[RMDB]
Source information:
An RNA of 177 nucleotides, treated with DMS and 2A3 and read out base by base. Reactivities are given for positions 27 through 126. For DMS the reverse transcriptase was MarathonRT.
RNA sequence: GGGAACGACUCGAGUAGAGUCGAAAAUACGCUAAGUUCGCUUAGCGUAAAAUAUAUGGGUCUAUAUAAAACCUGAUAGCCGUAGAAGAUCAUGUAUCGGCAAAAUCACCAUCUUCGGAUGGUGAAAGUAGUGAAAGUGGUUCGCCACUUUCACUACAAAAGAAACAACAACAACAAC
Reactivity to DMS in 0.01 (KOAc 150mM, MgCl2 10mM, bicine 150mM(pH8.5), 24C), signal-to-noise 2, nucleotides 027 to 126: u000a000c000g000c000u000a010a020g040u000u020c290g020c000u000u000a000g010c000g000u000a000a060a090a090u010a040u000a040u000g020g010g020u000c010u000a100u010a100u010a100a040a120a140c010c000u010g000a180u010a060g000c010c000g000u000a150g020a130a050g000a010u010c030a050u000g010u000a070u010c000g000g000c000a040a060a070a160u000c000a010c010c000a000u000c000u010u000c160g010g000a000u000g010g010u010g000a000a010a070
Reactivity to 2A3 in 0.01 (KOAc 150mM, MgCl2 10mM, bicine 150mM(pH8.5), 24C), signal-to-noise 2, nucleotides 027 to 126: u050a000c000g020c010u010a000a000g030u020u060c100g040c170u000u000a000g000c000g010u000a010a000a010a020u170a000u010a030u020g010g030g010u000c000u000a100u010a010u040a300a160a020a050c010c010u000g020a050u090a050g010c000c010g020u000a010g030a180a000g020a030u060c030a040u120g090u200a060u090c020g000g040c000a000a010a020a070u020c000a000c000c000a010u020c000u040u060c250g120g000a000u000g000g000u000g000a000a010a000